[RMDB]
RNA sequence: GGGAACGACUCGAGUAGAGUCGAAAACAUUUUCUAGUAAUUUUAUGAAUAUGGGAGAAUUGACUGACCUUGGACAGAGUUUGCUGUAUACUGAAUCAGCACACAGCUUGCAGAUUAGUUUUAACUUAGAUCCAAUGCCAGAAACUACGUAUGUGUAGAAUACGAUCUUAUUCGUAAGAUCGUAUUCAAAAGAAACAACAACAACAAC
Reactivity to 2A3 in 0.01 (KOAc 150mM, MgCl2 10mM, bicine 150mM(pH8.5), 24C), signal-to-noise 7, nucleotides 027 to 156: c010a020u090u110u070u100c050u060a060g070u160a200a250u090u140u090u220a120u170g020a050a040u100a060u100g030g050g010a070g070a160a160u140u090g050a110c020u020g010a030c010c000u000u010g010g010a010c030a040g070a030g040u030u080u050g020c020u010g040u100a060u040a120c030u020g040a060a090u100c020a030g020c020a000c010a010c000a030g040c010u050u080g010c020a010g020a090u040u060a020g090u040u110u060u040a030a030c010u010u030a020g030a110u010c030c000a010a020u050g010c010c000a030g050a090a100a020c050u110a020c050g090u110a070u150g080u010g020u020a020
Reactivity to DMS in 0.01 (KOAc 150mM, MgCl2 10mM, bicine 150mM(pH8.5), 24C), signal-to-noise 4, nucleotides 027 to 156: c030a090u010u000u000u000c020u010a150g010u030a090a110u010u020u000u000a070u010g000a080a100u000a060u010g000g020g020a120g020a070a090u000u010g010a210c010u000g010a030c010c030u010u000g040g010a070c040a300g020a120g020u000u000u000g020c010u000g020u010a080u000a080c030u000g000a140a150u000c040a050g020c050a020c080a050c020a040g020c020u000u000g020c030a110g010a120u000u000a070g020u000u010u000u000a020a060c030u000u000a130g000a300u000c000c050a040a050u000g000c010c020a080g010a110a040a100c040u010a050c060g020u000a040u000g010u000g000u000a170